An RNA of 177 nucleotides, treated with 2A3 and DMS and read out base by base. Source: RMDB library M2PK90, as collected in RNAgym. High DMS reactivity at an A or C suggests that its Watson-Crick edge is free. The reactions ran in a buffer of 150 mM KOAc, 10 mM MgCl2 and 150 mM bicine (pH 8.5), at 24 C.
[RMDB]
RNA sequence: GGGAACGACUCGAGUAGAGUCGAAAAUUAAAGGAGGAGGAGAAAUAUAGCGAGAGAUCGGUCCUCCCACGCGCGUCUCGCGCUGAUAAGAGGAAUAAGAGCAUGAUUAAUAGAUAGCGCGCAAAAAUCGAUAUAUUACCUUCGGGUAAUAUAUCGAAAAAGAAACAACAACAACAAC
Reactivity to 2A3 in 0.01 (KOAc 150mM, MgCl2 10mM, bicine 150mM(pH8.5), 24C), signal-to-noise 3, nucleotides 027 to 126: u070u050a060a020a010g060g050a040g010g010a020g040g020a040g110a080a190a020u260a030u070a080g050c010g000a040g000a010g000a040u020c030g000g060u000c000c010u020c020c000c000a040c010g020c000g000c010g040u040c030u050c050g010c000g030c000u010g010a040u040a140a070g070a050g150g030a080a050u150a150a040g040a020g030c030a020u070g030a130u170u250a140a090u050a040g030a020u030a030g000c020g000c000g000c030a010a060a020a040a070
Reactivity to DMS in 0.01 (KOAc 150mM, MgCl2 10mM, bicine 150mM(pH8.5), 24C), signal-to-noise 4, nucleotides 027 to 126: u020u010a060a120a110g020g000a100g010g000a030g000g000a080g010a080a110a090u010a070u000a100g010c010g010a070g010a100g000a050u000c040g010g000u000c030c040u000c010c010c060a080c110g000c020g030c020g010u000c070u010c080g010c030g010c020u010g000a090u010a080a110g000a070g010g000a080a060u010a080a120g010a050g010c030a070u010g010a140u020u010a060a100u010a060g010a060u000a060g010c030g020c030g020c120a020a050a030a080a060